[RMDB]
RNA sequence: GGGAACGACUCGAGUAGAGUCGAAAAACGCUCGCUAUCUACGGAUAGCGAGCGAAGAGGACGGGAGGAAAGGAGGACGUGGUUUCAUGCAGGUCCUCACUCCUCCCCUCCCGUCUUCCUCUUCCAAAAUAAAUUAGCUUUUCGAAGCUAAUUUAUUAAAAGAAACAACAACAACAAC
Reactivity to DMS in 0.01 (KOAc 150mM, MgCl2 10mM, bicine 150mM(pH8.5), 24C), signal-to-noise 7, nucleotides 027 to 126: a120c030g030c000u000c000g000c000u000a000u010c000u000a100c230g020g000a020u000a000g010c010g010a000g010c000g010a010a020g000a020g000g010a020c030g000g000g000a020g000g010a090a100a140g010g010a010g000g000a030c150g010u000g010g000u010u020u020c090a100u030g020c210a130g010g000u000c020c010u010c020a010c020u000c010c010u000c020c000c000c000u000c000c000c000g010u000c030u010u000c010c110u010c090u010u000c010c010a080a110
Reactivity to 2A3 in 0.01 (KOAc 150mM, MgCl2 10mM, bicine 150mM(pH8.5), 24C), signal-to-noise 9, nucleotides 027 to 126: a000c010g000c000u000c000g000c000u000a000u000c000u020a030c260g120g000a000u000a000g000c000g000a000g000c000g000a000a010g010a000g010g000a000c010g010g010g010a000g010g030a190a120a100g020g000a010g010g010a050c150g040u020g010g060u050u090u130c110a130u280g160c070a050g030g130u040c000c010u030c000a010c010u000c000c000u000c000c000c000c000u000c000c000c000g000u000c000u020u010c010c010u040c020u040u020c010c000a090a130